[RMDB]
RNA sequence: GGGAACGACUCGAGUAGAGUCGAAAACACACAAGGUUCGCCUUGUGUGCAAGAAUAGACGAAUACUACCGUAGAAGAAUUCAGGUCACAUAACUACGGAAAUGGCGUUCUGCUUCGGCAGAACGAAAGUUAUCGUCUCGUUCGCGAGACGAUAACUAAAAGAAACAACAACAACAAC
Reactivity to DMS in 0.01 (KOAc 150mM, MgCl2 10mM, bicine 150mM(pH8.5), 24C), signal-to-noise 1, nucleotides 027 to 126: c000a010c000a000c000a030a000g060g010u000u000c220g040c000c010u000u000g020u000g010u010g000c030a060a070g010a080a100u000a110g000a070c120g020a110a050u000a100c060u000a110c000c000g010u000a000g000a100a060g010a050a090u000u000c150a090g010g010u000c090a050c090a060u000a070a080c000u000a010c000g010g000a090a100a080u000g030g010c040g010u000u000c000u000g010c000u010u010c210g040g000c000a000g000a010a000c000g000a000a010
Reactivity to 2A3 in 0.01 (KOAc 150mM, MgCl2 10mM, bicine 150mM(pH8.5), 24C), signal-to-noise 2, nucleotides 027 to 126: c010a010c010a000c000a000a000g060g040u030u070c180g140c040c010u020u000g010u000g000u000g000c020a020a030g080a110a110u150a110g080a020c070g090a110a030u080a120c020u020a110c010c010g030u010a000g010a210a000g040a020a020u200u120c080a100g050g090u060c030a000c010a160u150a110a060c020u010a000c010g040g050a030a060a030u140g140g050c000g030u000u030c000u000g000c000u020u030c170g110g000c010a000g000a000a000c010g010a000a000